[RMDB]
This 177-nucleotide RNA was probed chemically with 2A3 and DMS. High DMS reactivity at an A or C suggests that its Watson-Crick edge is free. Reactivities are given for positions 27 through 126. The data come from the RNA Mapping Database (RMDB), library OK2TRN. The 2A3 profile rests on 1,693 reads.

RNA sequence: GGGAACGACUCGAGUAGAGUCGAAAAACGAGCCACUGCGCACCUUAUUCGGCCAGCAUCAGGGAACCGACGUGCAACUUAUCCGACCCUUUGUCGCCAGGCCUCUGCGCAACGUUAAUGUCCCUGGUAAACGGCAGAAAUUCGUUUCUGCCGUUUAAAAAGAAACAACAACAACAAC
Reactivity to 2A3 in 0.01 (KOAc 150mM, MgCl2 10mM, bicine 150mM(pH8.5), 24C), signal-to-noise 2, nucleotides 027 to 126: a000c010g020a040g100c070c060a050c140u020g000c000g000c010a030c010c090u150u180a190u190u170c090g020g000c000c010a000g000c000a060u050c030a010g000g020g020a100a130c050c020g050a080c040g070u070g090c080a080a040c070u170u100a140u110c050c040g040a060c100c010c000u000u050u150g140u110c050g020c060c060a070g030g010c010c000u060c050u030g000c030g000c030a010a060c000g030u020u050a040a040u150g050u050c030c000c020u000g080g020
Reactivity to DMS in 0.01 (KOAc 150mM, MgCl2 10mM, bicine 150mM(pH8.5), 24C), signal-to-noise 5, nucleotides 027 to 126: a050c070g010a170g000c070c120a120c170u000g020c030g000c020a050c180c150u010u010a130u000u000c160g010g010c020c030a250g000c040a070u000c150a050g010g000g010a060a100c110c070g010a080c110g010u010g010c130a080a070c170u010u010a080u010c050c020g000a180c040c040c030u000u000u010g000u010c090g040c040c090a060g000g010c040c010u000c130u000g020c060g020c030a070a050c030g010u000u000a060a100u010g000u000c000c010c010u010g000g020